[RMDB]
RNA sequence: GGGAACGACUCGAGUAGAGUCGAAAAUGCUUGCCUGUAAUCCCAGCUACUCAGGAGGCUGAGGCAGGAGAAUCACUUGAACCUGGAAGACAGAGGUUGCCGUGAGCUGAGAUUGCACCAUUGCACUCCAGCCUGGGUGACAGAGUGAAACUCUGUCUAGGCUAGUGUAAUUCGUUACACUAGCCUAAAAAGAAACAACAACAACAAC
Reactivity to DMS in 0.01 (KOAc 150mM, MgCl2 10mM, bicine 150mM(pH8.5), 24C), signal-to-noise 3, nucleotides 027 to 156: u020g000c030u010u000g010c020c000u000g010u030a070a130u000c010c000c000a230g040c020u000a070c030u010c080a120g020g030a180g000g030c030u010g010a060g030g000c030a050g020g000a090g010a100a100u000c040a050c050u010u010g000a090a070c030c010u000g010g030a100a060g010a100c030a050g010a090g000g000u010u000g010c020c040g010u010g000a060g000c010u000g010a300g010a040u000u000g010c010a130c070c190a150u000u000g010c000a040c020u000c010c020a040g010c000c000u000g000g000g030u000g020a090c000a060g010a070g020u010g000a120a050a300c020u000c000u010g000u000c000
Reactivity to 2A3 in 0.01 (KOAc 150mM, MgCl2 10mM, bicine 150mM(pH8.5), 24C), signal-to-noise 3, nucleotides 027 to 156: u090g000c020u040u060g060c010c000u040g080u120a060a060u050c000c000c010a020g040c050u090a040c000u000c050a020g000g030a020g040g020c020u040g070a060g020g000c020a000g030g050a020g060a070a100u070c030a050c130u030u060g050a050a090c010c030u020g060g040a010a070g040a020c030a000g050a040g060g060u040u030g000c030c030g080u040g060a080g010c000u010g050a070g000a210u010u050g000c000a030c040c110a220u140u180g000c000a000c030u000c000c000a010g010c000c000u190g110g000g030u010g010a010c020a020g050a020g060u130g020a020a010a020c000u020c000u000g000u020c000
The data come from the RNA Mapping Database (RMDB), library OK3TST. The record gives the reactivity of an RNA of 207 nucleotides to DMS and 2A3. The reactions ran in a buffer of 150 mM KOAc, 10 mM MgCl2 and 150 mM bicine (pH 8.5), at 24 C. DMS (dimethyl sulfate) methylates the pairing face of unpaired adenines and cytosines. Values are in units of 0.01, from 0 to 300, in steps of 10. The DMS profile rests on 6,376 reads.